This 207-nucleotide RNA was probed chemically with 2A3. Reactivities are rounded to 0.1 and cut off at 0 and 3. Conditions: 150 mM KOAc, 10 mM MgCl2 and 150 mM bicine (pH 8.5), 24 C. It was measured as part of the RMDB library OK3TST.

RNA sequence: GGGAACGACUCGAGUAGAGUCGAAAAAGGAAGGACUCUUCUCCUUCUCCUGAGACUGACUUCGAGAGAAGGACUAGCUGACUAGUCUCUCCUUCUCUCAGCUAGGAUCUCAGUCGACUGAUCGAUCAGCUUCCUAGUCUCGAUCUCGAGAUCAGAGAACAGUUGAUUCCUUCGGGAAUCAACUGUUAAAAGAAACAACAACAACAAC
Reactivity to 2A3 in 0.01 (KOAc 150mM, MgCl2 10mM, bicine 150mM(pH8.5), 24C), signal-to-noise 1, nucleotides 027 to 156: a000g050g000a000a000g020g010a050c050u080c080u300u090c050u120c040c000u050u000c010u000c040c000u030g010a030g000a040c000u040g020a040c000u040u030c140g010a010g010a030g000a000a010g020g000a020c060u000a010g060c100u120g070a300c060u110a080g110u040c070u050c020u020c040c000u000u000c000u000c000u000c000a000g000c020u050a050g010g090a230u000c000u000c000a010g010u000c020g000a000c030u050g050a180u020c000g030a030u000c030a030g040c170u000u000c000c000u000a040g080u020c000u000c010g090a210u030c150u170c200g160a070g010a040u080c070a020g070a000g000